[RMDB]
Notes: An RNA of 177 nucleotides, treated with DMS and read out base by base. The RNA was probed in 150 mM KOAc, 10 mM MgCl2 and 150 mM bicine (pH 8.5) at 24 C. For DMS the reverse transcriptase was MarathonRT.
RNA sequence: GGGAACGACUCGAGUAGAGUCGAAAAGAUAUGGAUCCCUACGGGUCAACAGCUCGGAAACGAGACAUGACCUGUAGAGGAUCCUAAGUCAAAGCUGGGAAGCGAUGUUCGCAUCGCUUCCCAGCAACUAUAUGUUUUACUUCGGUAAAACAUAUAGAAAAGAAACAACAACAACAAC
Reactivity to DMS in 0.01 (KOAc 150mM, MgCl2 10mM, bicine 150mM(pH8.5), 24C), signal-to-noise 1, nucleotides 027 to 126: g010a030u010a300u000g020g000a010u000c000c010c000u010a010c010g010g000g000u000c000a030a060c300a200g010c000u010c020g010g010a040a090a240c000g010a000g000a060c080a150u000g000a000c050c000u000g000u010a000g020a070g000g000a000u010c020c000u000a010a090g020u000c050a140a120a150g010c000u050g000g000g000a020a000g020c000g030a010u010g020u000u010c200g030c000a000u010c010g000c020u000u000c000c030c000a000g010c000a000a020